[RMDB]
RNA sequence: GGGAACGACUCGAGUAGAGUCGAAAAGAAGUAUCUGACUAACGCCCAGAGUAUGGGGAUGAGCGCCACGUACCUUCUGCAGGUUUCCGACUUCAUUGCCCCGGACCUGAUGAUUCAGUACCUCCAGCCCUCGGUACUAUUUCGAUAGUACCGAGGGAAAAGAAACAACAACAACAAC
Reactivity to DMS in 0.01 (KOAc 150mM, MgCl2 10mM, bicine 150mM(pH8.5), 24C), signal-to-noise 2, nucleotides 027 to 126: g000a090a050g020u000a080u000c010u020g000a190c080u030a130a190c150g000c010c020c000a080g020a150g020u030a020u000g000g000g010g000a080u040g000a060g030c090g030c050c030a030c110g030u030a090c040c010u000u030c000u030g000c050a030g000g000u000u000u080c020c020g030a150c030u020u000c030a090u000u000g000c010c000c020c000g020g010a060c020c010u000g000a070u010g010a140u030u020c140a030g000u050a000c010c040u000c020c030a190g000
Reactivity to 2A3 in 0.01 (KOAc 150mM, MgCl2 10mM, bicine 150mM(pH8.5), 24C), signal-to-noise 5, nucleotides 027 to 126: g080a040a020g040u110a090u130c040u070g060a080c050u060a170a030c060g070c020c000c000a010g020a020g050u130a080u140g010g010g000g040a040u090g050a030g020c040g010c020c020a050c050g040u070a040c000c020u080u060c030u070g040c050a050g010g040u050u130u060c030c010g050a070c020u080u030c060a100u010u240g050c010c020c010c020g000g030a040c010c000u050g010a050u030g010a030u070u050c010a000g020u040a040c000c010u040c030c010a070g020

This 177-nucleotide RNA was probed chemically with DMS and 2A3.
It was measured as part of the RMDB library OK1LIB.
For 2A3, 3,937 sequencing reads were counted.
For 2A3 the reverse transcriptase was SuperScript II with manganese.